An RNA of 207 nucleotides, treated with 2A3 and DMS and read out base by base. For 2A3 the reverse transcriptase was SuperScript II with manganese. For 2A3, 720 sequencing reads were counted. The reactions ran in a buffer of 150 mM KOAc, 10 mM MgCl2 and 150 mM bicine (pH 8.5), at 24 C. The data come from the RNA Mapping Database (RMDB), library OK3TST. DMS adducts were read by reverse transcription with MarathonRT.
RNA sequence: GGGAACGACUCGAGUAGAGUCGAAAAGGUUCUCAUCUUUGAAAGAGGGCAGCAUAAGGGAAAUGAUGGAGAAGGGAGAAUUGUGGAUGGUUAUUUAUAGCUCAUGAUUCAUCCAAGGACUGAGUUAUUCUCCCCAUGAGGCUAACCGGCCUCUUUCAUCUCAAGCAUUCUUCGGAAUGCUUGAGAUAAAAGAAACAACAACAACAAC
Reactivity to 2A3 in 0.01 (KOAc 150mM, MgCl2 10mM, bicine 150mM(pH8.5), 24C), signal-to-noise 2, nucleotides 027 to 156: g020g010u050u070c050u010c000a120u090c010u100u220u200g050a040a070a000g030a030g000g000g030c050a050g000c020a020u070a150a110g000g040g010a060a130a040u160g020a040u080g030g000a030g010a100a030g010g000g000a000g010a080a040u090u080g020u060g030g010a060u020g000g050u080u040a040u070u130u050a090u120a030g000c030u040c060a000u090g070a180u110u070c030a060u050c100c120a110a080g050g010a010c060u080g000a020g030u010u010a020u090u020c000u010c060c040c000c000a050u070g010a000g020g020c000u030a150a060c090c030g020g030c000c000u010c020u000u000u010c000
Reactivity to DMS in 0.01 (KOAc 150mM, MgCl2 10mM, bicine 150mM(pH8.5), 24C), signal-to-noise 1, nucleotides 027 to 156: g010g010u000u000c040u000c020a190u000c040u020u000u000g010a100a080a100g020a070g010g020g030c120a080g000c120a040u010a090a060g010g050g020a090a090a040u010g010a090u000g000g040a060g030a060a060g030g040g000a140g010a050a080u000u000g010u000g010g010a110u010g030g010u000u020a090u000u000u000a090u010a080g030c060u000c010a000u000g020a130u000u000c010a050u010c060c060a110a180g030g020a120c070u000g020a150g000u000u010a070u010u000c020u000c000c020c000c030a060u000g010a060g010g090c050u000a080a120c120c030g030g000c010c010u010c010u000u000u010c010